Chemical mapping of a 177-nucleotide RNA with 2A3 and DMS. For DMS the reverse transcriptase was MarathonRT. The DMS profile rests on 1,894 reads.
RNA sequence: GGGAACGACUCGAGUAGAGUCGAAAAAUGCGCAAUGUGACUUCACUUGGCUGGCAGUAUCUGCGGGCUUUCGUCAUUAUUUAUCUGUGUUUGUGGGCAGGUAAAGCAGUGACCUUGCUGCUGCCCAACAUCCAACUGACUUCGGUCAGUUGGAUGUAAAAGAAACAACAACAACAAC
Reactivity to 2A3 in 0.01 (KOAc 150mM, MgCl2 10mM, bicine 150mM(pH8.5), 24C), signal-to-noise 1, nucleotides 027 to 126: a000u150g010c040g040c030a050a000u070g040u020g120a110c040u070u060c190a060c040u090u060g020g010c000u020g150g060c040a050g040u120a100u190c070u060g040c020g060g030g070c010u070u210u210c040g050u010c030a040u040u110a040u050u100u010a050u050c020u000g060u030g070u120u110u130g180u150g020g110g120c010a000g060g040u090a140a050a000g040c020a030g000u020g050a060c000c020u000u020g000c030u080g000c010u020g000c000c000c000a010
Reactivity to DMS in 0.01 (KOAc 150mM, MgCl2 10mM, bicine 150mM(pH8.5), 24C), signal-to-noise 1, nucleotides 027 to 126: a100u010g000c040g020c060a010a020u000g010u000g000a170c110u000u000c060a030c060u010u000g000g010c020u010g010g000c000a050g020u010a080u010c090u000g000c060g010g000g000c080u000u020u000c150g020u000c020a020u000u000a090u010u000u010a010u000c030u010g030u000g030u000u010u010g000u000g030g010g000c020a000g020g000u010a040a030a050g000c100a020g000u010g010a070c060c150u020u010g000c020u000g020c010u000g000c050c010c040a050